[RMDB]
The record gives the reactivity of an RNA of 177 nucleotides to DMS and 2A3.
RNA sequence: GGGAACGACUCGAGUAGAGUCGAAAAGGUAGAUCACCUGAGGCCAGGAGUUCGAGAUCAACCUGGCCAACAUGGCGAAACCCUAUCACUACUAAAAAUACAAAAAUUAACCUGGCGUGGUGGCACGAUCACAGAAAGAAUUCGUUCUUUCUGUGAUAAAAGAAACAACAACAACAAC
Reactivity to DMS in 0.01 (KOAc 150mM, MgCl2 10mM, bicine 150mM(pH8.5), 24C), signal-to-noise 7, nucleotides 027 to 126: g000g010u000a070g010a160u000c040a040c030c050u000g010a130g010g000c020c010a020g000g010a090g010u000u010c120g000a110g010a050u010c060a090a090c010c000u000g000g000c010c000a000a040c100a170u010g010g010c030g000a030a060a050c020c010c010u000a060u000c040a100c020u000a010c020u010a000a020a040a060a050u010a060c060a020a030a030a050a040u010u010a050a100c070c030u000g000g010c050g030u000g010g020u010g000g010c070a040c130g000
Reactivity to 2A3 in 0.01 (KOAc 150mM, MgCl2 10mM, bicine 150mM(pH8.5), 24C), signal-to-noise 7, nucleotides 027 to 126: g030g010u050a030g010a190u050c010a010c020c000u010g010a020g000g000c010c000a010g030g000a050g070u160u260c150g090a040g020a220u090c010a010a080c000c000u000g000g000c010c000a000a000c020a010u050g000g000c010g020a040a060a040c010c000c000u030a040u150c030a030c050u070a010c030u100a120a040a020a040a030u190a050c090a040a130a050a060a050u150u090a050a050c020c030u040g050g000c020g010u020g000g030u040g050g000c030a010c070g040
Reactivities are given for positions 27 through 126.